[RMDB]
RNA sequence: GGGAACGACUCGAGUAGAGUCGAAAAUACUCAUGGGAAGUCGGCACGACUCCCGACUAACGUGGAUGUCCGCCGUUUAGCUCAUUGGUCGGAGCUGUCGUGCGGACGUUGAGUAGCCGCGCGCCAACAUAGUCGGCAAAUUCGUUUGCCGACUAUGAAAAGAAACAACAACAACAAC
Reactivity to DMS in 0.01 (KOAc 150mM, MgCl2 10mM, bicine 150mM(pH8.5), 24C), signal-to-noise 4, nucleotides 027 to 126: u030a040c000u000c000a100u050g010g020g000a100a080g020u000c000g010g040c190a110c090g000a060c080u020c050c010c000g000a030c060u010a050a100c110g020u040g000g000a100u030g010u000c000c010g000c010c020g020u020u010u030a000g010c000u010c020a120u010u020g000g010u010c070g020g010a020g000c020u000g020u000c000g000u030g020c010g000g000a000c000g000u020u000g010a030g010u000a040g020c020c000g000c050g000c040g000c020c050a090a220
Reactivity to 2A3 in 0.01 (KOAc 150mM, MgCl2 10mM, bicine 150mM(pH8.5), 24C), signal-to-noise 5, nucleotides 027 to 126: u090a010c010u020c010a110u070g040g020g050a120a090g020u040c040g050g110c100a040c200g060a030c030u020c010c010c000g010a010c020u130a160a060c030g070u080g050g030a090u150g030u030c010c020g020c000c000g040u070u080u180a020g010c010u020c010a050u060u100g150g020u090c060g050g000a030g030c030u010g020u020c030g020u100g010c000g020g000a000c000g000u000u020g010a010g010u030a020g000c000c000g050c000g010c000g020c010c020a040a020

Record summary
An RNA of 177 nucleotides, treated with DMS and 2A3 and read out base by base. For DMS the reverse transcriptase was MarathonRT. Conditions: 150 mM KOAc, 10 mM MgCl2 and 150 mM bicine (pH 8.5), 24 C. For 2A3, 4,503 sequencing reads were counted.